[RMDB]
Structure probing data (2A3 and DMS) for a 207-nucleotide construct.
For DMS the reverse transcriptase was MarathonRT.
Conditions: 150 mM KOAc, 10 mM MgCl2 and 150 mM bicine (pH 8.5), 24 C.
RNA sequence: GGGAACGACUCGAGUAGAGUCGAAAACUUAGGCCCAUUUUGACAAAGAUGCACACAGACCGGCACAUAGUAGACUCUCGGUGCAUAUUUGUUGGAUAAAUAAAUGGGUGAGAAUAUGUUUGGCCACUCAUUUGUUGAACGAGUGAAUGCUGUUCAACGUGCUAAAUUUAUUCGUAAAUUUAGCACGAAAAGAAACAACAACAACAAC
Reactivity to 2A3 in 0.01 (KOAc 150mM, MgCl2 10mM, bicine 150mM(pH8.5), 24C), signal-to-noise 5, nucleotides 027 to 156: c060u120u090a080g140g010c000c000c010a030u030u020u040u140g000a000c000a000a020a010g010a020u010g000c000a010c020a010c020a030g050a050c050c060g080g110c110a060c070a140u240a070g140u100a070g100a140c020u010c010u010c160g000g000u010g000c000a000u000a020u020u000u000g010u010u020g060g030a070u080a230a140a010u160a010a000a020u050g020g020g000u030g030a110g060a050a050u220a100u190g100u070u110u090g050g000c000c010a000c010u020c010a050u060u080u170g070u040u070g040a050a040c040g000a040g020u040g070a100a100u170g020c020u020g050u050u070c040a090a030
Reactivity to DMS in 0.01 (KOAc 150mM, MgCl2 10mM, bicine 150mM(pH8.5), 24C), signal-to-noise 2, nucleotides 027 to 156: c050u000u000a140g060g030c020c020c020a120u000u000u010u010g000a050c010a000a040a050g010a050u010g020c010a030c010a140c070a150g020a060c060c040g020g060c040a140c090a170u010a180g020u010a130g010a080c040u000c000u000c040g060g020u010g030c020a040u000a030u000u000u000g010u000u030g030g020a130u000a050a080a080u010a020a010a020u010g000g030g050u020g000a070g000a070a090u000a060u010g010u000u000u010g020g000c000c000a030c020u000c020a050u000u000u000g000u010u000g000a050a070c050g020a060g000u000g010a110a200u010g030c010u000g020u000u000c030a060a190
For 2A3, 3,180 sequencing reads were counted.
Values cover nucleotides 27 to 156.
The data come from the RNA Mapping Database (RMDB), library OK3TST.